Source information
The data come from the RNA Mapping Database (RMDB), library OK2TRN. Chemical mapping of a 177-nucleotide RNA with 2A3 and DMS. Values cover nucleotides 27 to 126. The 2A3 profile rests on 776 reads. 2A3 adducts were read by reverse transcription with SuperScript II with manganese. For DMS, 695 sequencing reads were counted.
RNA sequence: GGGAACGACUCGAGUAGAGUCGAAAAGCAGAGCCUAGACAAGAGUUCCAUCACCUGUGUGAUCAGUGUAGAGAUAUGUCACAAUGCCUCCUGUAGGCAGAGGCUAAACAAGAGUUACAUCACCUGGGUGACUUGAGCGGUUCGCCGCUCAAGUCACAAAAGAAACAACAACAACAAC
Reactivity to 2A3 in 0.01 (KOAc 150mM, MgCl2 10mM, bicine 150mM(pH8.5), 24C), signal-to-noise 1, nucleotides 027 to 126: g000c040a030g040a000g080c000c000u040a030g010a010c020a040a150g020a010g000u060u010c020c010a030u070c060a030c080c030u060g000u030g060u020g150a010u120c130a060g000u050g040u260a010g000a000g040a060u000a040u230g010u000c010a050c030a130a120u070g000c020c000u070c020c060u100g040u090a030g000g000c000a030g010a060g020g020c020u000a000a070a030c050a040a020g100a000g090u050u080a040c040a070u050c040a020c090c010u060g110g050
Reactivity to DMS in 0.01 (KOAc 150mM, MgCl2 10mM, bicine 150mM(pH8.5), 24C), signal-to-noise 1, nucleotides 027 to 126: g030c060a150g010a150g010c030c050u010a080g030a020c110a150a080g000a160g070u000u000c000c030a080u000c010a030c040c040u000g000u010g000u010g030a040u010c200a040g030u000g010u000a050g030a110g010a080u010a030u010g030u000c050a060c080a170a220u000g000c020c010u000c000c140u000g030u000a030g010g000c020a030g000a020g000g000c000u010a010a030a040c110a060a110g000a090g000u010u010a050c110a100u000c030a040c040c020u000g030g000